Chemical mapping of a 177-nucleotide RNA with 2A3 and DMS. For DMS the reverse transcriptase was MarathonRT. Values cover nucleotides 27 to 126. The 2A3 profile rests on 9,323 reads. The DMS profile rests on 5,772 reads. It was measured as part of the RMDB library RFMREP.
RNA sequence: GGGAACGACUCGAGUAGAGUCGAAAAAGCAGUAGAAAUACUGCACCACUUUGUCAAACUCCGAACUUGCUAGAAUCGAAGAUACCAGGUGCUAGGGCGUAGGGAUAAGCUUUACGCCCGUGACGGACUCUUAUCUACUGUUCGCAGUAGAUAAGAGAAAAGAAACAACAACAACAAC
Reactivity to 2A3 in 0.01 (KOAc 150mM, MgCl2 10mM, bicine 150mM(pH8.5), 24C), signal-to-noise 5, nucleotides 027 to 126: a000g000c000a000g010u020a000g030a020a040a020u010a010c000u040g010c000a010c000c000a010c000u160u150u130g110u080c050a100a060a050c030u010c020c010g060a050a040c030u030u090g030c020u100a050g100a110a090u090c070g060a110a020g020a090u070a080c020c020a020g050g020u060g060c040u110a070g030g000g000c000g000u000a000g040g000g010a080u110a200a080g150c000u010u020u010a000c000g000c000c000c000g010u010g010a010c000g020g020a010
Reactivity to DMS in 0.01 (KOAc 150mM, MgCl2 10mM, bicine 150mM(pH8.5), 24C), signal-to-noise 5, nucleotides 027 to 126: a110g020c010a010g020u000a020g010a190a080a140u000a010c000u000g010c000a170c060c020a100c150u000u000u000g010u000c080a070a080a120c080u000c020c030g010a080a120c060u010u010g010c110u000a050g000a060a060u000c050g000a060a070g000a070u010a060c060c030a060g010g010u000g000c090u000a120g010g000g010c000g000u000a030g010g000g010a300u000a080a180g000c010u000u000u000a020c010g010c000c000c000g010u000g000a050c090g000g010a210